[RMDB]
RNA sequence: GGGAACGACUCGAGUAGAGUCGAAAAUUGGCAGCUUCUGUAAUCACGCUUCUGUGAGGUCUGAUUGUGGGAUGGCCUGAGGCUGGGAAUCACUGUGUAGCGGACCAGCUCAUGUUGACGGAACGUCCGCACUAAGCUUGACAUCAAUAUGGGUGCCGAACGCACCCGUGUUCGCACGGGUGCGUUCAAAAGAAACAACAACAACAAC
Reactivity to 2A3 in 0.01 (KOAc 150mM, MgCl2 10mM, bicine 150mM(pH8.5), 24C), signal-to-noise 1, nucleotides 027 to 156: u060u060g070g000c050a040g000c010u040u000c000u090g140u230a010a050u070c000a030c020g010c060u110u060c090u220g140u050g020a040g000g070u000c030u080g090a120u130u100g010u090g030g060g000a050u110g010g050c000c030u070g000a030g020g010c010u010g020g000g020a000a010u020c020a040c100u030g020u080g010u210a040g000c010g040g000a040c010c030a030g030c000u010c010a080u180g100u100u010g010a030c010g070g080a190a090c140g040u060c000c000g050c020a010c080u010a000a090g060c030u040u080g020a000c000a050u040c040a070a090u080a020u100g020g000g000u010g030c020c000
Overview:
An RNA of 207 nucleotides, treated with 2A3 and read out base by base. For 2A3, 448 sequencing reads were counted. The reactions ran in a buffer of 150 mM KOAc, 10 mM MgCl2 and 150 mM bicine (pH 8.5), at 24 C.